[RMDB]
RNA sequence: GGGAACGACUCGAGUAGAGUCGAAAAUUUUACUGAUGGUAAGCUUAAUUGUAGUUUCCAGGACGCUGCCUCUAAUAUCUUUGUUAUUAACAAGGACACUUAUGCAGCUCUUAGAAACUCUUUAACUCAACGAUCCACUUCGGUGGAUCGAAAAGAAACAACAACAACAAC
Reactivity to 2A3 in 0.01 (KOAc 150mM, MgCl2 10mM, bicine 150mM(pH8.5), 24C), signal-to-noise 5, nucleotides 027 to 129: u020u000u020u080a100c080u100g140a160u140g060g080u100a070a000g030c060u020u020a050a020u090u070g130u190a020g010u000u000u000c010c030a000g030g000a030c150g020c000u000g000c000c000u000c000u020a010a010u000a020u020c000u000u000u000g040u020u100a300u170u260a120a000c000a000a000g000g000a000c010a040c070u000u000a000u120g000c000a000g000c000u000c000u020u010a000g020a000a000a000c000u000c010u020u040u040a090a050c060u040c040a060a020
Reactivity to DMS in 0.01 (KOAc 150mM, MgCl2 10mM, bicine 150mM(pH8.5), 24C), signal-to-noise 4, nucleotides 027 to 129: u000u040u010u060a060c070u040g060a130u080g000g040u120a070a040g040c140u000u000a070a010u120u000g040u060a050g000u000u000u000c000c100a090g020g020a030c210g050c030u020g020c060c000u020c000u010a020a070u020a180u020c000u020u010u020g000u010u020a190u060u070a020a060c010a010a050g000g010a030c120a060c300u000u000a030u000g010c030a120g010c000u000c010u030u030a050g000a030a030a000c000u010c030u030u010u000a040a020c090u020c020a040a210